[RMDB]
RNA sequence: GGGAACGACUCGAGUAGAGUCGAAAAGUCCUCAGGUUCGCCUGAGGACAAAUAAACUUGAGAAAAGAAGGACCGUACUCAAGAAUAUACGGAAACAAACAAAAAGCCGACAGUUCGCUGUCGGCAACAUAUAUACUACCUUCGGGUAGUAUAUAUGAAAAGAAACAACAACAACAAC
Reactivity to 2A3 in 0.01 (KOAc 150mM, MgCl2 10mM, bicine 150mM(pH8.5), 24C), signal-to-noise 3, nucleotides 027 to 126: g000u010c000c010u020c000a000g050g020u040u050c170g040c090c000u000g020a000g000g010a000c000a000a000a000u000a000a030a010c010u010u050g010a030g030a080a220a050a050g070a030a050g120g030a050c030c020g010u040a030c010u020c040a040a030g030a180a040u170a030u040a080c030g000g070a050a130a050c060a020a140a020c030a000a120a060a060a010g020c010c000g000a000c000a010g010u060u120c160g040c110u000g000u000c000g000g010c000a020a010
Reactivity to DMS in 0.01 (KOAc 150mM, MgCl2 10mM, bicine 150mM(pH8.5), 24C), signal-to-noise 3, nucleotides 027 to 126: g020u000c000c000u000c000a000g000g000u010u010c200g060c000c000u000g010a010g010g020a000c000a000a030a040u000a060a060a100c040u000u000g000a050g010a200a050a110a090g000a160a100g000g000a170c010c030g000u010a100c030u000c030a030a080g010a120a110u000a040u010a040c070g000g010a140a060a060c120a040a130a120c090a030a110a130a180a090g000c000c000g020a000c000a000g000u000u010c150g010c010u000g000u010c010g000g010c000a000a010